[RMDB]
RNA sequence: GGGAACGACUCGAGUAGAGUCGAAAACCGGAUCCAGCAGAUCCUGCGCCGUUACUUCAAGCGGAUCCUGCCCAGGCCGCUGACCCUGAUCGAGGAUCCCAUGAGCCAGCUCAACCGCCUGAUGCAGGCCUCAGCCAUGAUUCGUCAUGGCUGAGGCAAAAGAAACAACAACAACAAC
Reactivity to DMS in 0.01 (KOAc 150mM, MgCl2 10mM, bicine 150mM(pH8.5), 24C), signal-to-noise 2, nucleotides 027 to 126: c030c040g000g000a010u030c020c050a130g140c090a240g030a090u020c020c010u000g000c020g000c130c050g020u010u020a070c070u000u020c110a080a100g060c070g000g000a160u020c050c050u000g000c010c070c070a220g000g000c070c060g000c080u010g060a130c130c020c030u000g000a080u030c050g000a080g010g010a050u020c000c000c000a120u030g030a070g000c000c050a090g030c020u010c070a050a050c100c040g000c010c040u000g000a200u000g000c080a130g060
Reactivity to 2A3 in 0.01 (KOAc 150mM, MgCl2 10mM, bicine 150mM(pH8.5), 24C), signal-to-noise 3, nucleotides 027 to 126: c000c000g040g010a030u020c010c020a050g010c010a020g110a090u020c000c020u050g010c050g000c010c010g120u110u090a070c030u110u090c110a060a040g020c020g060g000a060u040c000c000u020g010c010c050c000a040g020g020c040c000g070c030u090g030a080c000c000c000u030g030a060u070c080g030a000g020g000a030u020c000c000c000a020u050g010a020g040c020c050a020g000c000u020c040a050a050c030c010g050c000c030u050g010a050u080g060c030a040g010